[RMDB]
RNA sequence: GGGAACGACUCGAGUAGAGUCGAAAAACCGGGGGCCGGAGCGGAGCGUGUUUCAGAGGUGCGUAUAAAAUCCCAGGGGCGCCAGGAGGCAGCAGCGACGGCGCAGCGUGGGACGGCCAGGCGCGACAUCGGAUCUUAAGUUCGCUUAAGAUCCGAUAAAAGAAACAACAACAACAAC
Reactivity to DMS in 0.01 (KOAc 150mM, MgCl2 10mM, bicine 150mM(pH8.5), 24C), signal-to-noise 2, nucleotides 027 to 126: a060c100c040g010g020g020g000g040c040c010g040g020a080g000c060g010g000a100g040c090g010u000g000u010u010u010c060a090g020a130g000g010u000g020c030g000u010a130u010a040a060a140a120u010c030c000c020a090g000g000g000g020c030g020c010c000a070g000g000a110g020g010c070a090g030c020a080g000c010g010a160c010g000g000c010g000c020a010g000c040g000u000g010g000g030a010c080g000g000c070c050a070g000g010c050g000c010g000a060c140
Reactivity to 2A3 in 0.01 (KOAc 150mM, MgCl2 10mM, bicine 150mM(pH8.5), 24C), signal-to-noise 2, nucleotides 027 to 126: a000c030c000g000g000g010g000g040c030c030g040g040a010g010c050g020g000a000g030c050g000u070g010u040u060u040c070a060g010a040g080g020u080g010c000g000u070a030u090a170a130a010a000u010c000c010c020a040g060g000g000g000c010g000c010c000a060g040g050a090g030g080c030a020g010c020a030g000c050g060a070c040g020g000c020g000c000a030g060c100g090u080g010g010g050a080c080g030g000c000c020a020g020g020c030g030c000g000a010c030
This 177-nucleotide RNA was probed chemically with DMS and 2A3. Values cover nucleotides 27 to 126.